[RMDB]
RNA sequence: GGGAACGACUCGAGUAGAGUCGAAAAGAGCUGAAUGCGCUCGUAAAACAGAUUCAAACAAACUAACUGCAAACGACGAACGUUUCGCACUCGCUGCUUAAUUGCCAGUGAGCCUUGCAACAGUUGGCCGAUGGGCUGGGCAAGGGGGUCUGGAGCAGAGAAUUAGGAACUUCGGUUCCUAAUUCUCAAAAGAAACAACAACAACAAC
Reactivity to DMS in 0.01 (KOAc 150mM, MgCl2 10mM, bicine 150mM(pH8.5), 24C), signal-to-noise 1, nucleotides 027 to 156: g010a030g010c020u000g060a120a130u010g010c100g000c030u010c020g000u000a060a160a100a050c050a020g000a150u000u000c040a040a110a190c130a100a110a220c080u000a090a130c020u000g000c040a020a090a160c030g010a040c040g010a040a060c040g000u000u000u010c080g000c050a070c020u000c000g020c050u010g040c000u000u020a120a270u000u000g030c110c010a050g070u000g010a180g040c040c040u000u000g010c000a020a090c020a070g010u000u000g040g060c040c010g030a130u020g000g020g010c010u030g020g000g060c030a080a060g010g000g000g020g030u000c040u000g010g020a100g040c080a130
Reactivity to 2A3 in 0.01 (KOAc 150mM, MgCl2 10mM, bicine 150mM(pH8.5), 24C), signal-to-noise 4, nucleotides 027 to 156: g020a000g000c020u030g060a130a040u090g050c050g000c070u010c020g030u080a040a030a040a010c030a020g030a020u040u090c030a020a080a080c050a110a130a050c090u130a040a060c050u090g020c020a060a020a010c010g180a030c050g090a130a050c020g030u010u030u050c070g000c010a020c010u020c010g010c010u020g000c000u060u080a080a090u300u040g040c090c000a010g020u000g020a010g000c000c020u020u040g000c030a110a090c010a180g020u060u060g100g020c040c020g060a110u140g070g030g000c030u020g010g040g000c010a020a000g010g010g000g010g000u000c020u050g040g000a040g000c090a020